[RMDB]
RNA sequence: GGGAACGACUCGAGUAGAGUCGAAAAGAAAGAAAGAAAGAAAAAUUAAAAGGCAAACUUUCCGAAAGGAAAGGACGCAAAGCCACGGGCCUAAGGACAUUGUCUAUGGUAGCCGGGCCGCCUUAAAUCACUUAUUAUCUUUCGAGAUAAUAAGUGAAAAAGAAACAACAACAACAAC
Reactivity to DMS in 0.01 (KOAc 150mM, MgCl2 10mM, bicine 150mM(pH8.5), 24C), signal-to-noise 2, nucleotides 027 to 126: g010a090a060a090g010a050a040a070g000a050a070a070g010a030a070a070a100a070u000u020a040a020a030a050g010g030c010a300a240a140c020u000u000u000c000c000g000a010a010a010g010g000a010a010a000g000g000a030c030g010c020a070a070a010g000c000c010a000c000g000g000g000c000c000u010a000a110g000g000a010c000a120u010u020g020u000c000u000a020u010g000g000u000a000g010c000c000g010g000g020c000c030g030c010c020u000u010a030a060a060
Reactivity to 2A3 in 0.01 (KOAc 150mM, MgCl2 10mM, bicine 150mM(pH8.5), 24C), signal-to-noise 8, nucleotides 027 to 126: g050a020a050a000g090a040a080a010g080a060a080a010g080a050a140a050a040a020u170u250a130a130a050a010g120g000c000a000a010a010c010u000u000u000c000c000g000a000a000a000g000g000a000a010a000g010g000a000c000g000c100a040a000a000g000c000c000a000c000g000g000g000c000c000u000a000a000g020g000a010c090a300u220u300g010u000c010u010a000u010g000g000u000a000g000c000c000g000g000g000c000c010g000c000c000u100u060a050a180a060
This 177-nucleotide RNA was probed chemically with DMS and 2A3. High 2A3 reactivity points to a flexible backbone, as in loops and unpaired stretches. It was measured as part of the RMDB libraries RFM100 and RFMREP. Reactivities are given for positions 27 through 126. The reactions ran in a buffer of 150 mM KOAc, 10 mM MgCl2 and 150 mM bicine (pH 8.5), at 24 C.